[RMDB]
RNA sequence: GGGAACGACUCGAGUAGAGUCGAAAACUCAUUUAUGCCAUGGAGUAUGGCCUCCUUCCGUAAAGCAGGGGUUUAAUGGACAGGAAUUUGUCCUGCCUAUUUACACUGUGCCUGUUGCCUGGCUCAGGAUAUCACGCUAUUUCGAUAGCGUGAUAUCAAAAGAAACAACAACAACAAC
Reactivity to 2A3 in 0.01 (KOAc 150mM, MgCl2 10mM, bicine 150mM(pH8.5), 24C), signal-to-noise 9, nucleotides 027 to 126: c000u020c040a090u130u210u170a180u210g030c030c030a050u130g050g010a050g040u190a130u080g040g000c000c010u030c010c000u110u110c040c050g120u120a070a080a050g030c030a030g010g040g030g000u030u060u100a040a030u040g020g010a030c000a010g040g140a080a110u210u120u170g210u090c000c000u000g000c000c000u030a050u000u060u020a040c080a010c030u060g060u130g100c000c010u050g030u080u080g030c010c020u030g010g020c010u030c030a030g130
Reactivity to DMS in 0.01 (KOAc 150mM, MgCl2 10mM, bicine 150mM(pH8.5), 24C), signal-to-noise 5, nucleotides 027 to 126: c020u000c010a120u030u010u040a070u050g000c000c010a030u040g000g000a090g000u020a100u030g010g000c040c060u000c040c020u000u010c080c070g000u030a070a100a110g000c040a020g000g000g010g010u010u020u010a020a020u010g020g000a040c000a010g000g020a030a260u030u030u030g010u000c010c000u000g020c040c000u000a010u010u000u020a030c050a070c070u000g000u000g020c010c010u000g000u010u020g010c050c020u000g000g000c030u010c130a110g020
Description: Structure probing data (2A3 and DMS) for a 177-nucleotide construct. Source: RMDB library OK1LIB, as collected in RNAgym. High 2A3 reactivity points to a flexible backbone, as in loops and unpaired stretches. For 2A3 the reverse transcriptase was SuperScript II with manganese. The RNA was probed in 150 mM KOAc, 10 mM MgCl2 and 150 mM bicine (pH 8.5) at 24 C. For 2A3, 24,810 sequencing reads were counted.